[RMDB]
Chemical mapping of a 207-nucleotide RNA with DMS and 2A3. The RNA was probed in 150 mM KOAc, 10 mM MgCl2 and 150 mM bicine (pH 8.5) at 24 C. It was measured as part of the RMDB library OK3TST. For DMS the reverse transcriptase was MarathonRT. For DMS, 1,683 sequencing reads were counted. The 2A3 profile rests on 772 reads.
RNA sequence: GGGAACGACUCGAGUAGAGUCGAAAAGACAGGGUUUCCGAUCACUAUCGAGAACGCACUGGUAGCCGUGCUGAACCCUACGCUGGUAGACGAUUUCGUCCAGGACUUCAAACACAGAAAGCGCAUGAACUACUUCAACAACCUGGAGAUCGGAAUCAAAUCCUCCGAUUUUCGAAUCGGAGGAUUUAAAAGAAACAACAACAACAAC
Reactivity to DMS in 0.01 (KOAc 150mM, MgCl2 10mM, bicine 150mM(pH8.5), 24C), signal-to-noise 1, nucleotides 027 to 156: g020a130c000a080g030g050g000u000u000u000c000c000g020a020u000c100a150c170u000a190u010c010g000a070g000a090a110c060g000c060a090c030u000g000g020u000a050g000c030c050g000u050g030c070u000g000a070a080c020c000c030u010a120c060g010c010u010g100g020u000a050g030a090c000g010a300u000u000u000c040g010u000c000c150a060g030g000a090c060u010u000c030a070a070a140c190a160c070a140g000a060a040a060g000c040g040c040a130u000g030a110a070c040u000a030c030u000u010c040a000a050c020a030a060c020c000u000g030g000a080g010a010u000c030g030g040a030a020u010c070
Reactivity to 2A3 in 0.01 (KOAc 150mM, MgCl2 10mM, bicine 150mM(pH8.5), 24C), signal-to-noise 2, nucleotides 027 to 156: g070a020c040a030g010g000g080u030u050u000c000c000g000a010u060c050a030c150u180a050u120c080g030a050g010a100a020c040g000c000a020c000u020g020g000u040a030g030c010c020g030u040g050c090u060g180a070a090c000c000c010u040a030c120g000c000u010g020g070u080a090g010a150c040g020a050u120u100u050c000g050u020c030c000a010g000g070a020c000u130u000c160a110a240a060c080a030c010a070g150a120a110a020g060c040g010c070a030u070g020a090a020c010u060a050c020u200u160c030a140a080c000a080a100c110c000u000g030g000a050g020a040u050c010g000g010a010a020u030c000